[RMDB]
RNA sequence: GGGAACGACUCGAGUAGAGUCGAAAAGGUAUGAUUAGGGUGAGACCUAGGAACCGUAGGGGUAUUCUCAAACGAAGCUUUUGCAGUGACGCCCAUGUAAGUGGGAUAUAACAACAGAACUCGUAUGUGUGGCACAGAGAGUUCGCUCUCUGUGCAACCUUUAUUGCAGCUUCGGCUGCAAUAAAGGAAAAGAAACAACAACAACAAC
Reactivity to DMS in 0.01 (KOAc 150mM, MgCl2 10mM, bicine 150mM(pH8.5), 24C), signal-to-noise 1, nucleotides 027 to 156: g020g020u020a070u010g000a130u000u010a040g030g040g020u000g030a100g010a150c050c020u000a080g020g000a020a090c030c000g030u000a100g010g010g070g000u000a110u000u000c000u000c070a120a120a090c050g040a040a080g000c080u010u000u000u020g060c040a160g000u000g000a240c170g020c010c000c030a020u000g000u020a120a170g000u010g000g000g020a030u010a080u000a170a060c020a030a080c070a080g030a050a020c060u000c000g020u000a020u020g040u020g000u000g090g030c000a020c000a040g000a040g000a070g000u010u020c240g020c020u010c020u000c000u000g040u000g010c020a010a010
Reactivity to 2A3 in 0.01 (KOAc 150mM, MgCl2 10mM, bicine 150mM(pH8.5), 24C), signal-to-noise 2, nucleotides 027 to 156: g060g000u110a040u130g050a110u140u060a040g020g040g010u010g030a080g050a070c020c030u040a020g000g120a050a040c040c030g070u100a030g000g020g010g000u000a100u080u130c040u020c030a070a130a020c050g080a080a030g000c020u070u040u110u070g000c020a010g000u010g060a020c060g030c000c000c040a030u050g110u140a080a080g020u020g000g010g000a000u030a000u010a110a010c080a000a020c010a010g050a080a080c030u040c090g020u080a080u140g100u010g010u100g060g020c000a000c000a000g010a000g000a000g010u060u020c090g090c010u020c000u030c000u000g000u000g000c000a000a000